[RMDB]
RNA sequence: GGGAACGACUCGAGUAGAGUCGAAAAGAAUAAGCAAAAAUGUGAUCUUGCUUGUAAAUACCAUUUUGAGAGGUUAAUAAAUUACAAGUAGUGCUAUUUUUGUCUCUCUCUGCAAUAACGAACCGAAGGUGGGAUACCAUUUCGAUGGUAUCCCACCAAAAGAAACAACAACAACAAC
Reactivity to DMS in 0.01 (KOAc 150mM, MgCl2 10mM, bicine 150mM(pH8.5), 24C), signal-to-noise 2, nucleotides 027 to 126: g010a070a060u040a110a130g000c020a000a020a030a080a000u010g010u000g010a220u030c060u020u050g010c000u000u000g020u000a000a020a030u000a030c050c020a130u090u030u020u010g000a140g000a180g020g000u000u020a140a040u040a070a060a050u010u000a010c000a010a050g000u000a040g020u000g000c010u010a000u000u000u000u000u000g000u000c000u000c060u000c000u000c070u000g020c200a140a030u010a010a110c160g000a230a140c250c110g000a120a120
Reactivity to 2A3 in 0.01 (KOAc 150mM, MgCl2 10mM, bicine 150mM(pH8.5), 24C), signal-to-noise 2, nucleotides 027 to 126: g050a050a030u300a030a000g000c000a000a000a050a000a000u060g120u010g100a120u110c000u020u020g000c000u000u000g020u000a020a010a000u110a000c020c000a120u070u020u070u180g280a290g030a110g010g010u020u030a090a020u120a110a130a060u080u020a000c000a000a010g000u010a020g080u060g040c000u000a000u000u000u000u040u040g200u040c040u000c000u000c000u000c000u100g030c000a010a120u060a080a100c100g120a020a000c130c030g070a060a040